[RMDB]
RNA sequence: GGGAACGACUCGAGUAGAGUCGAAAAGAGAAUGAGAGAUCGUCAAUUAAAGUACGUUCACCAUAAGAUUUCGUUAGAUUUUGUACUUCAAUCACUUUAUCCCCUAAGCGCGGACCAGGUGGAAUAAGAUUACAUUGUUCUUCGGAACAAUGUAAUCAAAAGAAACAACAACAACAAC
Reactivity to DMS in 0.01 (KOAc 150mM, MgCl2 10mM, bicine 150mM(pH8.5), 24C), signal-to-noise 5, nucleotides 027 to 126: g000a110g010a080a060u010g010a090g010a120g000a030u000c050g020u010c040a090a100u010u010a060a100a090g010u000a020c030g010u000u010c040a110c090c040a100u010a090a120g000a080u000u000u000c080g000u000u010a060g000a090u000u000u010u000g010u010a070c070u000u010c050a020a070u000c050a040c020u000u000u000a120u010c010c010c010c130u010a080a090g020c090g020c060g020g020a050c050c060a040g010g020u000g000g000a070a070u010a070a110
Reactivity to 2A3 in 0.01 (KOAc 150mM, MgCl2 10mM, bicine 150mM(pH8.5), 24C), signal-to-noise 4, nucleotides 027 to 126: g040a010g020a040a110u100g010a020g010a000g020a060u020c020g060u020c070a040a050u130u160a160a050a040g030u070a030c030g020u010u070c030a060c120c020a030u060a160a050g070a130u060u070u110c030g050u070u090a070g020a220u040u050u070u140g040u030a040c010u040u070c030a050a090u060c020a040c070u090u100u060a070u120c000c000c000c000u070a150a040g060c040g000c040g050g000a020c020c000a030g060g000u030g030g070a030a020u090a100a030

Structure probing data (DMS and 2A3) for a 177-nucleotide construct.
DMS adducts were read by reverse transcription with MarathonRT.